This 177-nucleotide RNA was probed chemically with 2A3 and DMS. The reactions ran in a buffer of 150 mM KOAc, 10 mM MgCl2 and 150 mM bicine (pH 8.5), at 24 C. Source: RMDB library OK2TRN, as collected in RNAgym. For 2A3, 2,259 sequencing reads were counted.
[RMDB]
RNA sequence: GGGAACGACUCGAGUAGAGUCGAAAAGUGCGGACUGAAAUUCAUAGGAGCCUCUCCAUUAUGGCUGAACGCCGCGGUAUUCCGCGUAGUCGCGACGUAAACGUUCUGUGUUCGCGUUCAGGCCUCAAGCAUUAUCCGUAUUCGUACGGAUAAUGCUAAAAGAAACAACAACAACAAC
Reactivity to 2A3 in 0.01 (KOAc 150mM, MgCl2 10mM, bicine 150mM(pH8.5), 24C), signal-to-noise 3, nucleotides 027 to 126: g090u070g060c030g030g080a030c010u050g050a040a200a190u220u120c070a070u180a130g050g030a010g040c020c010u070c010u000c000c000a060u170u160a090u170g020g000c010u010g000a020a010c010g020c020c010g000c090g000g000u160a280u290u100c010c000g000c000g010u030a020g060u090c010g000c020g040a020c020g070u110a000a270a040c060g030u100u070c060u120g070u010g010u150u100c030g000c000g000u000u010c010a030g110g090c000c030u080c060a030
Reactivity to DMS in 0.01 (KOAc 150mM, MgCl2 10mM, bicine 150mM(pH8.5), 24C), signal-to-noise 3, nucleotides 027 to 126: g010u010g010c010g000g010a080c030u000g000a060a030a130u000u000c090a100u000a120g010g020a110g010c060c030u010c040u000c030c040a130u010u010a090u000g000g010c020u010g000a040a030c010g040c010c030g000c000g000g000u010a170u020u010c020c020g040c030g010u000a090g000u010c030g010c040g000a030c040g010u010a080a080a150c090g010u010u010c080u020g020u000g010u000u010c070g000c030g010u000u000c020a040g000g020c000c030u000c220a100